[RMDB]
RNA sequence: GGGAACGACUCGAGUAGAGUCGAAAAUAAAAUAAUGCACAUAAUCCAGUCGCAGACGCUAAAAAUGACGCUGCGUCGCGACGCAUGUGGCAACGCGCACUCACGCCGAAGUGAAAUCGGUAAAAAACCGUUCACUACGAUUCGUCGUAGUGAACGGAAAAGAAACAACAACAACAAC
Reactivity to 2A3 in 0.01 (KOAc 150mM, MgCl2 10mM, bicine 150mM(pH8.5), 24C), signal-to-noise 1, nucleotides 027 to 126: u120a010a090a010a000u160a030a000u050g090c020a000c000a040u120a130a030u090c100c030a030g020u000c010g000c120a080g020a000c020g000c080u110a090a120a000a000a120u180g110a090c080g050c160u040g020c000g000u010c020g000c000g000a000c000g030c000a030u010g000u000g070g030c050a020a020c130g080c020g000c010a020c040u060c000a010c140g000c000c000g060a050a000g020u030g130a110a040a110u080c010g000g000u060a040a090a000a000a000a040
Reactivity to DMS in 0.01 (KOAc 150mM, MgCl2 10mM, bicine 150mM(pH8.5), 24C), signal-to-noise 1, nucleotides 027 to 126: u000a100a030a090a210u000a100a030u000g010c000a040c060a140u040a100a090u000c030c050a230g040u000c000g090c000a150g000a040c000g000c000u000a010a030a040a210a070u000g010a150c090g000c140u000g000c000g010u000c000g000c050g030a040c010g000c050a030u000g040u000g040g010c010a090a190c180g000c090g000c050a030c040u010c110a090c030g000c040c080g040a000a010g080u000g040a130a030a050u000c060g100g040u030a000a020a110a100a110a020

The data come from the RNA Mapping Database (RMDB), library M2PK90. This 177-nucleotide RNA was probed chemically with 2A3 and DMS. For 2A3, 809 sequencing reads were counted. 2A3 adducts were read by reverse transcription with SuperScript II with manganese.